[RMDB]
RNA sequence: GGGAACGACUCGAGUAGAGUCGAAAAGGGUCCGUAACGGUUUCGACAGGUUGGCGAACGCUACUCUGUGAUUCAGGUCGAGAGUGAGUCUCCUCUCGCAAAUCAAGGCUCAAAACAAAAGUAAAUGCGAAUAACAUCGUAAAAUUUGCUCGUAAGGGACUACGACGAAGUUCGCUUCGUCGUAGUCAAAAGAAACAACAACAACAAC
Reactivity to 2A3 in 0.01 (KOAc 150mM, MgCl2 10mM, bicine 150mM(pH8.5), 24C), signal-to-noise 2, nucleotides 027 to 156: g100g030g020u060c070c000g000u050a090a010c050g000g070u000u080u040c030g100a030c030a020g000g060u060u040g070g000c040g030a070a010c140g030c010u000a040c040u010c000u090g090u050g050a040u110u100c020a050g040g030u060c010g000a000g010a000g000u040g000a000g020u000c080u080c120c010u000c010u000c000g170c240a000a020a000u040c010a000a000g000g010c000u030c020a070a010a000a070c050a000a090a010a000g010u020a020a020a000u050g000c000g060a010a020u040a080a050c040a030u020c010g030u050a000a040a020a040u010u010u020g000c010u030c080g080u060a020a050g120g000